[RMDB]
RNA sequence: GGGAACGACUCGAGUAGAGUCGAAAAGAUAUGGACCAGGACAUGAGAUAUCUCGGAAACGAGAUCAUCUCAACAGCCUGUGUCCUAAGUCAAAAGAAGAUCCACUUCUUCGGAAGUGGAUCUUCAAUCAAGAGGUUUACUUCGGUAAACCUCUUGAAAAAGAAACAACAACAACAAC
Reactivity to DMS in 0.01 (KOAc 150mM, MgCl2 10mM, bicine 150mM(pH8.5), 24C), signal-to-noise 2, nucleotides 027 to 126: g030a050u000a300u010g000g000a010c000c000a020g000g000a060c060a300u000g000a010g010a010u000a040u000c000u000c000g000g000a080a070a130c000g020a010g000a010u000c190a000u000c000u000c000a040a030c280a160g000c000c000u010g010u020g030u000c000c000u000a010a060g010u000c040a050a080a140a150g000a010a000g010a010u000c000c000a000c000u000u000c000u000u020c180g000g000a000a000g020u000g000g000a000u000c000u000u000c000a030a130